[RMDB]
RNA sequence: GGGAACGACUCGAGUAGAGUCGAAAAGUCUCCUAGAGAGCUUGGCCGUCGGGCCUUACACCCCGACUUGCUGAGUUUCUCUAGGAGAGUCCCUUUCCCAGCCAGAGGUGGCUGGUCAAACAAAACCAAAACUCUUGCUAGUUCGCUAGCAAGAGAACAUAGGCAUAUACUUCGGUAUAUGCCUAUGAAAAGAAACAACAACAACAAC
Reactivity to DMS in 0.01 (KOAc 150mM, MgCl2 10mM, bicine 150mM(pH8.5), 24C), signal-to-noise 2, nucleotides 027 to 156: g000u000c000u130c010c020u000a020g000a050g020a020g020c000u000u000g030g020c020c300g020u000c040g030g030g020c060c040u000u000a090c230a220c300c020c030c000g010a040c020u000u000g020c000u020g000a100g000u010u000u000c000u000c000u010a020g000g010a030g000a000g010u010c010c000c050u000u000u010c060c000c000a100g000c060c000a040g030a280g000g020u000g010g000c000u000g000g000u000c020a040a080a090c080a080a130a140a160c070c030a050a100a140a140c030u000c010u000u000g020c000u000a010g020u000u010c300g030c000u010a020g000c000a020a030g000a010g010a020a070
Reactivity to 2A3 in 0.01 (KOAc 150mM, MgCl2 10mM, bicine 150mM(pH8.5), 24C), signal-to-noise 3, nucleotides 027 to 156: g040u000c000u000c000c000u000a000g000a000g000a010g000c000u010u020g020g000c000c030g010u010c000g000g010g020c010c010u040u100a100c090a040c010c010c010c000g000a000c000u070u260g000c020u020g000a000g000u030u300u000c000u010c000u000a000g000g000a000g000a000g000u020c000c000c000u010u070u030c010c000c000a000g040c010c010a030g000a030g100g080u010g040g000c000u060g050g050u150c030a010a030a070c060a040a020a000a010c020c010a020a050a100a100c000u000c010u000u000g000c000u000a010g010u080u020c260g010c160u000a000g000c000a000a000g000a000g000a010a020